[RMDB]
RNA sequence: GGGAACGACUCGAGUAGAGUCGAAAACUAUGCAGAUUCGUCUGCAUAGAGACCCGAUGAAGCGGCACAUACACAGCUUCAUACACGUAAGAAGUGCAAUAAAGGGACGAGGGUUCGCCCUCGUCAAAACAGAGUCACUGUUCGCAGUGACUCUGUUAAAAGAAACAACAACAACAAC
Reactivity to DMS in 0.01 (KOAc 150mM, MgCl2 10mM, bicine 150mM(pH8.5), 24C), signal-to-noise 3, nucleotides 027 to 126: c000u050a010u000g000c000a000g010a020u000u010c180g000u000c000u000g000c000a000u000a010g010a130g000a190c000c000c010g030a050u000g000a010a000g020c000g000g050c100a110c200a160u000a070c160a080c070a100g020c000u020u000c000a010u000a120c070a050c060g050u010a100a090g000a110a150g020u000g000c130a090a090u020a040a140a090g000g000g010a030c000g000a000g000g010g000u000u000c230g000c000c000c000u000c010g010u000c010a020a040
Reactivity to 2A3 in 0.01 (KOAc 150mM, MgCl2 10mM, bicine 150mM(pH8.5), 24C), signal-to-noise 3, nucleotides 027 to 126: c000u000a000u000g010c000a010g010a040u020u080c090g110u000c040u000g000c000a000u000a000g000a000g030a010c000c000c000g000a050u040g020a000a010g000c050g090g000c170a070c040a120u300a070c130a040c020a150g030c000u000u000c000a000u040a010c070a000c040g050u060a050a040g050a150a020g130u020g040c040a030a080u150a200a170a070g250g060g000a000c000g000a020g000g040g000u020u080c130g060c040c000c000u000c010g000u000c010a000a000